[RMDB]
This 177-nucleotide RNA was probed chemically with DMS and 2A3. Source: RMDB library OK1LIB, as collected in RNAgym. Reactivities are given for positions 27 through 126.
RNA sequence: GGGAACGACUCGAGUAGAGUCGAAAAGAGUUGGCAGAGGCGUACCGGCGGGGUAUUCCUACCCUUACCUACCCAGAAGCGCUGGGGGACAUUUCCUGUGCGCGGUUUUCGUGUGGUAUUGCAGGUGAGUGAUAUACUCAUUCGUGAGUAUAUCACUAAAAGAAACAACAACAACAAC
Reactivity to DMS in 0.01 (KOAc 150mM, MgCl2 10mM, bicine 150mM(pH8.5), 24C), signal-to-noise 8, nucleotides 027 to 126: g000a100g000u000u000g000g010c070a070g010a110g010g010c040g020u010a070c040c040g010g000c140g000g000g000g000u010a040u010u000c060c030u000a130c030c020c010u010u030a060c040c030u010a090c020c010c030a090g010a140a130g010c090g010c020u020g000g000g000g000g000a120c200a090u020u020u010c000c010u010g000u010g010c010g010c070g000g000u020u010u010u020c070g030u010g010u010g000g010u020a050u010u000g010c070a060g000g010u010g010
Reactivity to 2A3 in 0.01 (KOAc 150mM, MgCl2 10mM, bicine 150mM(pH8.5), 24C), signal-to-noise 7, nucleotides 027 to 126: g060a010g050u100u120g030g010c100a030g020a040g070g020c020g040u030a050c020c000g000g030c050g010g040g000g000u020a080u060u060c010c010u030a040c010c000c000u000u050a060c000c010u050a060c010c000c010a030g050a090a020g040c080g000c060u020g000g000g000g010g010a040c030a160u080u110u060c010c010u050g020u080g050c020g000c010g030g020u040u060u040u070c060g010u040g020u040g070g020u060a040u080u160g050c040a020g000g050u050g070